[RMDB]
RNA sequence: GGGAACGACUCGAGUAGAGUCGAAAAUUCCCAAACCCCCGGAAGUUGCCCGCACAGCGUCCAUCUUGGAACCGUCUCGAUCCAAGGCACGCCAAACCUCUGGAACCCACCCGAGAGGCAUUUCUCGCAGUAUGGUACAGUUCGCUGUACCAUACUGAAAAGAAACAACAACAACAAC
Reactivity to DMS in 0.01 (KOAc 150mM, MgCl2 10mM, bicine 150mM(pH8.5), 24C), signal-to-noise 1, nucleotides 027 to 126: u000u000c000c000c000a020a130a300c040c000c010c010c010g030g000a130a070g020u000u000g020c080c000c030g020c100a060c090a120g020c070g040u000c050c080a080u020c000u000u000g010g000a090a110c060c050g020u020c050u000c060g040a100u000c010c040a060a080g010g000c170a040c080g000c000c020a040a100a090c050c010u000c040u000g000g010a140a100c030c010c070a120c090c020c020g000a030g010a070g000g010c110a070u000u000u010c040u000c060g010

The data come from the RNA Mapping Database (RMDB), library RFMREP. The record gives the reactivity of an RNA of 177 nucleotides to DMS. Values cover nucleotides 27 to 126.